[RMDB]
RNA sequence: GGGAACGACUCGAGUAGAGUCGAAAAGAUAUGGAUAGGCAACAGCGAUGCACCACAAUGAUGUCGGAAACGAUUGAGUGGUCAUCGACAUGCCUAUCCUAAGUCAAAACCAGUGUUCGCACUGGAACUCCCAUAACAUCUUCGGAUGUUAUGGGAGAAAAGAAACAACAACAACAAC
Reactivity to DMS in 0.01 (KOAc 150mM, MgCl2 10mM, bicine 150mM(pH8.5), 24C), signal-to-noise 4, nucleotides 027 to 126: g000a020u000a300u010g010g000a000u000a000g000g000c000a020a070c260a220g000c000g000a020u000g020c280a010c020c000a000c000a160a160u000g010a110u000g000u000c010g000g000a140a070a190c000g000a030u000u000g000a070g000u000g000g000u000c010a000u000c000g030a020c090a130u000g000c000c000u010a000u000c000c000u000a020a030g030u010c030a120a060a110a110c010c000a020g000u000g000u000u010c250g010c010a020c010u000g000g000a070a090
Reactivity to 2A3 in 0.01 (KOAc 150mM, MgCl2 10mM, bicine 150mM(pH8.5), 24C), signal-to-noise 4, nucleotides 027 to 126: g030a000u070a030u160g010g010a010u000a000g010g000c010a070a040c060a290g130c020g000a000u020g040c230a010c020c030a000c000a060a300u290g070a030u130g010u030c010g020g060a090a060a080c010g020a010u040u060g030a020g020u000g000g010u000c000a000u000c000g010a020c000a000u050g000c000c000u000a000u000c000c000u000a010a010g010u000c050a010a000a100a200c010c000a010g010u000g040u040u130c300g010c100a000c000u000g010g020a030a050